[RMDB]
An RNA of 177 nucleotides, treated with 2A3 and DMS and read out base by base. For DMS, 4,931 sequencing reads were counted. The RNA was probed in 150 mM KOAc, 10 mM MgCl2 and 150 mM bicine (pH 8.5) at 24 C. DMS adducts were read by reverse transcription with MarathonRT. It was measured as part of the RMDB library OK1LIB. The 2A3 profile rests on 3,104 reads. Reactivities are given for positions 27 through 126.
RNA sequence: GGGAACGACUCGAGUAGAGUCGAAAAGGGCGUCGGCCUAGACCUCACCUUGCGAGAAAUUUUUAGUUCAUAUCCAGGGGAUGGUGAAUGGUUGGAUCUGACGAAGCCACGGUAAGGGCAAGGCUUACAGUGCUGAGUAGUUCGCUACUCAGCACUGAAAAGAAACAACAACAACAAC
Reactivity to 2A3 in 0.01 (KOAc 150mM, MgCl2 10mM, bicine 150mM(pH8.5), 24C), signal-to-noise 5, nucleotides 027 to 126: g060g020g000c080g040u060c040g040g000c000c000u010a030g040a040c010c000u050c040a120c020c010u030u020g040c140g030a040g210a180a190a180u150u110u090u140u150a160g030u020u100c070a040u100a040u200c010c020a020g000g030g040g000a040u150g030g040u030g030a140a110u100g020g080u060u040g050g010a040u000c070u120g010a010c090g060a050a010g010c020c000a060c040g020g070u170a100a120g040g000g020c050a070a020g010g020c000u020u020a030
Reactivity to DMS in 0.01 (KOAc 150mM, MgCl2 10mM, bicine 150mM(pH8.5), 24C), signal-to-noise 4, nucleotides 027 to 126: g010g000g020c010g010u010c120g010g000c030c000u000a090g030a070c040c000u020c120a200c000c030u010u020g000c090g030a080g020a070a060a060u010u050u060u020u060a180g000u000u020c060a080u010a190u000c050c030a080g000g000g000g010a050u030g010g010u000g000a100a040u050g010g010u020u030g000g000a110u010c040u010g010a130c120g000a090a120g020c070c040a110c070g010g000u030a110a080g000g000g020c040a120a100g010g020c050u010u000a110